Source information: Chemical mapping of a 207-nucleotide RNA with DMS. For DMS the reverse transcriptase was MarathonRT. For DMS, 1,135 sequencing reads were counted. Source: RMDB library M2RFPK, as collected in RNAgym.

RNA sequence: GGGAACGACUCGAGUAGAGUCGAAAAGAAAGUCCGAACCGGCGGUUACAGUCCGCGACCCGGUCGCCUCCAGGGACCGGUUGACCAGGUGAAAUUCCUGGACCGACGGUUAAAGUCCGGAUGGGAGAAAACAAUGGCUUGUUCGCAAGCCAUUGAAUCUAAGUACGUACUUCGGUACGUACUUAGAAAAAGAAACAACAACAACAAC
Reactivity to DMS in 0.01 (KOAc 150mM, MgCl2 10mM, bicine 150mM(pH8.5), 24C), signal-to-noise 1, nucleotides 027 to 156: g000a000a090a170g000u000c030c040g010a090a050c040c010g040g000c040g000g010u000u010a080c180a160g030u010c040c030g010c010g000a300c300c000c070g000g010u000c000g070c080c000u010c040c020a130g040g000g000a010c160c000g030g010u010u010g040a160c010c000a030g140g070u010g000a080a300a100u000u000c000c000u000g000g000a040c050c030g000a100c000g100g000u000u000a050a090a300g000u040c000c000g010g000a140u030g010g030g000a140g000a300a130a090a120c000a030a000u000g010g000c010u000u000g000u000u000c300g070c050a010a000g000c000c010a000u030u010g000a070a200